[RMDB]
RNA sequence: GGGAACGACUCGAGUAGAGUCGAAAACAUGUCGGAUCAGGUACUACGGUACCUAGCUAGUACAUGGAUCGCGAUCCAUGCCAUGAUCCAUGGAUCUCUCAUGUCGCAGUACCUAGAGUGACUAGUGUACUGUCGGAUUCUUCGGAAUCCGACAGUAAAAAGAAACAACAACAACAAC
Reactivity to 2A3 in 0.01 (KOAc 150mM, MgCl2 10mM, bicine 150mM(pH8.5), 24C), signal-to-noise 2, nucleotides 027 to 126: c030a030u060g010u010c050g030g000a120u080c030a020g000g010u000a000c010u000a040c270g090g000u000a000c000c000u010a010g000c020u040a050g050u080a020c020a010u000g000g040a130u120c060g040c060g040a010u000c040c020a050u080g020c010c030a180u230g020a040u000c000c000a010u020g030g000a010u030c000u000c010u020c010a060u060g050u020c050g010c030a020g010u020a000c010c010u010a010g020a030g200u230g110a160c000u030a010g030u000g020
Reactivity to DMS in 0.01 (KOAc 150mM, MgCl2 10mM, bicine 150mM(pH8.5), 24C), signal-to-noise 3, nucleotides 027 to 126: c010a030u000g020u000c060g000g010a060u000c080a040g020g000u000a010c000u000a090c200g040g020u000a000c030c020u000a040g010c050u000a070g000u000a100c000a010u000g010g000a080u000c120g020c170g000a060u000c070c110a050u010g000c110c130a110u000g000a060u010c150c020a030u010g000g000a050u000c010u000c020u000c020a080u000g000u010c070g010c030a030g010u000a030c000c000u000a030g010a300g030u010g030a090c010u000a020g030u000g010
An RNA of 177 nucleotides, treated with 2A3 and DMS and read out base by base. The reactions ran in a buffer of 150 mM KOAc, 10 mM MgCl2 and 150 mM bicine (pH 8.5), at 24 C. Source: RMDB library OK2TRN, as collected in RNAgym. DMS (dimethyl sulfate) methylates the pairing face of unpaired adenines and cytosines. The DMS profile rests on 2,538 reads.